The record gives the reactivity of an RNA of 177 nucleotides to 2A3. The 2A3 profile rests on 303 reads. The reactions ran in a buffer of 150 mM KOAc, 10 mM MgCl2 and 150 mM bicine (pH 8.5), at 24 C. 2A3 adducts were read by reverse transcription with SuperScript II with manganese.

RNA sequence: GGGAACGACUCGAGUAGAGUCGAAAACGGCGAGCUGUGUCAGGAUUGAGCGAAAGCGCCCGAACCCAGUUCUCAUGGUGGUGACGAUCAACCAAAGCCUGAAUAUCUUCAGGCAGUUCGGAUUCGUCGACCUGGUGCUGUUCGCAGCACCAGGUCGAAAAGAAACAACAACAACAAC
Reactivity to 2A3 in 0.01 (KOAc 150mM, MgCl2 10mM, bicine 150mM(pH8.5), 24C), signal-to-noise 1, nucleotides 027 to 126: c090g120g000c080g000a030g100c020u000g000u000g000u300c000a000g130g070a190u190u190g140a040g000c000g080a030a030a030g070c020g110c220c060c080g000a020a000c000c000c000a000g000u140u060c000u000c080a180u090g010g120u030g000g000u030g040a080c000g200a030u100c050a000a140c000c000a000a150a000g000c000c000u000g000a000a000u180a140u140c140u040u000c000a000g000g040c000a000g000u000u110c080g000g150a250u170u000c000g000u000